[RMDB]
RNA sequence: GGGAACGACUCGAGUAGAGUCGAAAAAAAAAACGGAAUAAAGUACUUGCGAUCCAUGCGCCCAAAACGAUCGCGCGCUUGAGUAAAGGUGACGUCCUCUUCCUCGGUGAGUUCAGACAAGUGUUCAUACAUCGUUACAAUUCGUUGUAACGAUGUAAAAAGAAACAACAACAACAAC
Reactivity to DMS in 0.01 (KOAc 150mM, MgCl2 10mM, bicine 150mM(pH8.5), 24C), signal-to-noise 4, nucleotides 027 to 126: a000a020a030a030a050a050c080g010g010a090a050u000a020a050a060g010u000a050c090u010u000g020c020g010a040u000c020c060a100u000g010c100g000c010c010c020a040a020a060a060c230g010a020u000c030g010c050g020c100g010c030u000u000g000a110g010u000a060a050a070g000g010u010g000a050c110g010u010c020c000u000c040u000u000c070c020u010c060g010g010u000g010a070g020u000u000c080a060g000a070c140a050a060g020u000g020u010u000c060a150
Reactivity to 2A3 in 0.01 (KOAc 150mM, MgCl2 10mM, bicine 150mM(pH8.5), 24C), signal-to-noise 2, nucleotides 027 to 126: a000a000a000a010a000a020c190g060g040a140a120u220a130a100a060g060u020a060c060u080u150g040c010g030a030u000c010c010a050u080g000c050g020c010c030c000a010a060a000a020c070g040a040u050c010g010c000g020c020g040c030u190u170g040a080g060u140a060a090a060g030g000u030g050a040c020g100u070c010c000u000c020u020u060c030c010u040c040g050g000u050g050a060g000u040u070c020a010g030a070c020a040a110g050u060g050u180u050c020a020